Chemical mapping of a 170-nucleotide RNA with 2A3 and DMS. The DMS profile rests on 10,391 reads. The RNA was probed in 150 mM KOAc, 10 mM MgCl2 and 150 mM bicine (pH 8.5) at 24 C. It was measured as part of the RMDB library 15KLIB.
RNA sequence: GGGAACGACUCGAGUAGAGUCGAAAAAUCCACCAGGAGAUGAACGGAAAAAUCACCUCCAGAGGACCCCUUCAGCGAACAGAAGAGACUCCCCUCGAUAGGAGCAAGACCAUAGCGAUGGGGGGAGAUGCAGCUCGGUUCGCCGAGCUGAAAAGAAACAACAACAACAAC
Reactivity to 2A3 in 0.01 (KOAc 150mM, MgCl2 10mM, bicine 150mM(pH8.5), 24C), signal-to-noise 4, nucleotides 027 to 129: a000u000c000c000a020c030c040a040g000g000a000g010a000u070g020a100a050c100g110g130a050a050a070a010a050u040c000a010c010c020u030c010c000a040g050a080g010g010a030c040c000c000c000u050u110c030a070g010c000g020a010a010c010a040g060a100a010g020a020g050a030c020u000c000c000c000c000u000c010g080a060u080a100g100g010a040g050c020a030a030g110a090c000c030a130u200a050g030c030g060a130u160g000g000g000g000g000g000a010g000a000u040g010
Reactivity to DMS in 0.01 (KOAc 150mM, MgCl2 10mM, bicine 150mM(pH8.5), 24C), signal-to-noise 7, nucleotides 027 to 129: a180u030c050c010a120c150c150a250g030g000a020g010a010u030g010a060a140c120g040g060a080a060a090a110a090u030c000a020c000c000u040c000c000a120g100a120g020g000a060c180c000c020c090u000u030c080a090g000c080g020a000a020c010a060g010a120a070g030a060g030a160c030u010c010c020c000c030u000c020g020a110u060a100g040g030a060g000c110a080a090g000a120c130c030a110u020a080g020c160g050a050u040g080g000g030g030g040g020a030g050a020u060g020